[RMDB]
RNA sequence: GGGAACGACUCGAGUAGAGUCGAAAAUGUCACCCAGGCUUCUAUGCAGUGGUGCUAUCUUGAUCUUGGCUCAUUGCAACCUCUGUCUUGUGAGCUCAAGCCAUCCUCCCACCUCAGCCUCCAAAGUGACUGAGACUACAGGUGCAUGCCGCCACACAUAUGUUAUAUAAUUCGUUAUAUAACAUAUAAAAGAAACAACAACAACAAC
Reactivity to DMS in 0.01 (KOAc 150mM, MgCl2 10mM, bicine 150mM(pH8.5), 24C), signal-to-noise 2, nucleotides 027 to 156: u010g030u000c040a120c000c010c030a180g000g000c020u000u000c070u000a100u000g020c030a080g000u000g020g020u000g030c030u000a070u010c050u000u030g010a130u000c030u000u000g010g000c040u000c010a050u000u010g010c030a070a080c090c060u000c050u010g030u000c060u000u000g010u000g000a090g030c030u010c060a080a060g010c040c030a070u000c010c030u010c020c020c030a150c090c010u000c010a060g020c000c000u010c060c050a100a040a180g000u010g000a060c020u020g010a060g000a080c020u000a100c060a060g030g020u000g000c060a090u000g000c020c060g030c020c020a040c050a100c100
Reactivity to 2A3 in 0.01 (KOAc 150mM, MgCl2 10mM, bicine 150mM(pH8.5), 24C), signal-to-noise 5, nucleotides 027 to 156: u110g020u050c030a040c030c020c010a040g110g010c040u200u080c080u300a100u260g000c020a020g000u050g070g020u050g030c020u050a090u100c070u080u180g050a090u090c020u050u070g020g000c000u010c010a040u010u100g020c010a110a160c010c050u110c080u120g080u100c080u170u120g070u050g020a010g000c020u030c210a040a010g020c030c010a040u040c010c030u010c010c010c000a020c010c010u010c010a010g020c010c010u050c010c040a120a120a020g060u090g070a070c010u020g000a010g000a020c010u040a030c030a020g030g010u010g000c040a030u060g040c060c010g020c020c040a050c010a010c020